[RMDB]
RNA sequence: GGGAACGACUCGAGUAGAGUCGAAAAUAAUAUGACCUUGAUAAAAAUAACGCAGGUUGUAAAGUGAAACAAAUAAGCUUGCGGUUCGUCGCAAGAAAAGAAACAACAACAACAAC
Reactivity to 2A3 in 0.01 (KOAc 150mM, MgCl2 10mM, bicine 150mM(pH8.5), 24C), signal-to-noise 6, nucleotides 027 to 095: u080a010a020u040a030u040g020a010c000c000u010u040g030a010u140a050a120a030a020a010u100a060a010c050g000c010a010g010g000u000u010g020u030a030a050a030g030u020g110a080a030a010c030a010a050a020u120a040a000g030c000u000u000g000c000g010g000u030u030c030g070u010c000g000c010a000a000g010a020
Reactivity to DMS in 0.01 (KOAc 150mM, MgCl2 10mM, bicine 150mM(pH8.5), 24C), signal-to-noise 9, nucleotides 027 to 095: u010a060a110u010a040u010g010a070c010c020u010u010g020a080u030a010a070a080a090a090u020a070a080c110g000c060a020g000g010u000u000g010u000a020a060a120g010u000g000a090a060a050c080a030a050a090u020a060a070g000c010u000u000g010c010g000g000u020u020c120g010u010c010g010c030a040a030g000a000